The record gives the reactivity of an RNA of 177 nucleotides to DMS and 2A3.
[RMDB]
RNA sequence: GGGAACGACUCGAGUAGAGUCGAAAAUACCACGGGCCAUUGAAAUUCAGGCUCGGCGGUUUUCAUUUCAGGCGAGGGGACCGACGGAUCGUUCGUUACUCCAUGAGUGGCGAGCGGUCUGUGGUUCAGACCAAACACUUUUCGAAGUGUUUGGUCUAAAAGAAACAACAACAACAAC
Reactivity to DMS in 0.01 (KOAc 150mM, MgCl2 10mM, bicine 150mM(pH8.5), 24C), signal-to-noise 4, nucleotides 027 to 126: u030a070c000c000a070c010g000g010g020c010c010a130u060u020g010a110a130a120u020u030c160a140g010g010c000u000c000g000g000c100g030g000u000u000u010u000c070a100u010u020u020c060a070g000g000c040g020a090g000g000g000g000a010c000c000g030a030c020g010g000a000u000c000g010u000u000c010g020u000u000a000c000u010c000c230a190u060g000a020g010u000g000g000c010g000a010g000c000g000g010u000c000u000g000u010g010g000u000u000c050
Reactivity to 2A3 in 0.01 (KOAc 150mM, MgCl2 10mM, bicine 150mM(pH8.5), 24C), signal-to-noise 7, nucleotides 027 to 126: u190a000c000c000a000c010g000g000g020c020c010a090u110u190g150a120a120a150u300u210c090a080g000g000c000u000c000g010g000c080g010g000u040u000u020u080c060a070u030u090u130c050a050g120g020c040g060a050g000g030g020g000a000c000c020g070a020c000g010g000a000u000c000g000u000u000c000g000u000u010a010c010u020c070c120a200u300g000a000g000u000g000g000c000g000a010g000c000g000g000u000c000u000g000u000g000g000u000u030c010
The RNA was probed in 150 mM KOAc, 10 mM MgCl2 and 150 mM bicine (pH 8.5) at 24 C.
For 2A3 the reverse transcriptase was SuperScript II with manganese.